[RMDB]
RNA sequence: GGGAACGACUCGAGUAGAGUCGAAAAGUAUGGAUGCCACCGUGACGGCUCAAUCACACAAGUGCCAACGAUAACGAGCCGCUCGCUAUUGCUGCGUAACUGACGGCCUGACGGUCUGACGUUACAAAAAACGAAAAGUGGUUCGCCACUUUUCGAACUAUGUAGGGAAGUUCGCUUCCCUACAUAGAAAAGAAACAACAACAACAAC
Reactivity to 2A3 in 0.01 (KOAc 150mM, MgCl2 10mM, bicine 150mM(pH8.5), 24C), signal-to-noise 6, nucleotides 027 to 156: g100u110a090u200g060g040a060u100g060c030c030a040c030c050g030u040g040a060c010g000g010c010u000c010a050a060u070c010a030c030a040c040a200a100g070u090g170c090c030a130a040c070g040a060u060a170a060c060g000a000g000c000c000g020c030u010c010g020c040u060a070u100u200g030c040u030g030c030g010u010a010a010c000u020g030a010c020g000g000c000c020u150g120a080c140g010g000u000c000u000g010a000c010g000u010u000a000c000a010a010a000a000a000a000c010g000a000a000a000a000g010u010g030g000u040u040c120g020c020c000a000c000u000u010u010u000c000g000a010a000
Reactivity to DMS in 0.01 (KOAc 150mM, MgCl2 10mM, bicine 150mM(pH8.5), 24C), signal-to-noise 3, nucleotides 027 to 156: g030u000a090u010g000g010a140u000g020c050c020a150c050c040g030u000g010a120c010g000g000c020u000c030a110a140u000c040a130c040a110c090a130a100g000u010g040c060c050a070a140c100g010a110u010a060a170c090g040a050g030c030c010g000c030u010c060g020c010u000a030u000u000g010c000u020g000c010g000u000a050a040c020u010g010a300c300g020g010c010c020u010g020a170c270g030g000u000c020u000g010a300c230g010u000u000a020c010a000a010a040a070a060a100c010g000a010a000a000a030g010u000g020g010u000u020c300g030c010c000a020c010u000u000u000u000c000g010a040a080
Annotation: Structure probing data (2A3 and DMS) for a 207-nucleotide construct. For 2A3, 6,322 sequencing reads were counted. 2A3 adducts were read by reverse transcription with SuperScript II with manganese. Values cover nucleotides 27 to 156. The data come from the RNA Mapping Database (RMDB), library M2RFPK. Conditions: 150 mM KOAc, 10 mM MgCl2 and 150 mM bicine (pH 8.5), 24 C. For DMS, 5,656 sequencing reads were counted.